[RMDB]
RNA sequence: GGGAACGACUCGAGUAGAGUCGAAAAUGCUGUUGCUGCAGCUGUGUAUAAGAUGAACAUCUGUAUACACAUGCCCAACGUGCGGAACAUUGUCAUUAAUGUCGGUGCCGACGUCACCGCUUAUAUAAGCAUCACCAUGAUUCGUCAUGGUGAUGCUAAAAGAAACAACAACAACAAC
Reactivity to 2A3 in 0.01 (KOAc 150mM, MgCl2 10mM, bicine 150mM(pH8.5), 24C), signal-to-noise 3, nucleotides 027 to 126: u120g030c000u020g040u130u090g110c080u140g000c000a010g010c020u030g000u010g000u010a000u000a010a010g000a020u070g100a080a060c030a170u030c000u030g290u070a000u000a000c000a000c000a010u120g020c000c000c000a010a030c090g100u160g030c040g030g030a060a020c020a110u060u160g060u100c010a050u070u280a160a090u160g120u180c020g020g030u000g000c030c020g110a050c030g010u040c040a030c070c010g030c020u160u060a140u020a020u020a100
Reactivity to DMS in 0.01 (KOAc 150mM, MgCl2 10mM, bicine 150mM(pH8.5), 24C), signal-to-noise 4, nucleotides 027 to 126: u010g050c020u000g020u000u000g020c160u010g010c080a070g020c040u000g020u000g000u000a010u010a080a010g010a010u000g000a130a110c250a110u010c000u000g000u020a030u000a000c010a020c000a050u010g000c010c110c050a110a110c120g020u000g010c010g020g010a160a050c040a030u000u000g030u000c070a060u020u000a070a090u000g010u010c040g020g010u000g020c030c040g020a050c100g010u000c050a070c040c020g000c200u000u000a060u010a080u000a040
The record gives the reactivity of an RNA of 177 nucleotides to 2A3 and DMS. Source: RMDB library OK2TST, as collected in RNAgym.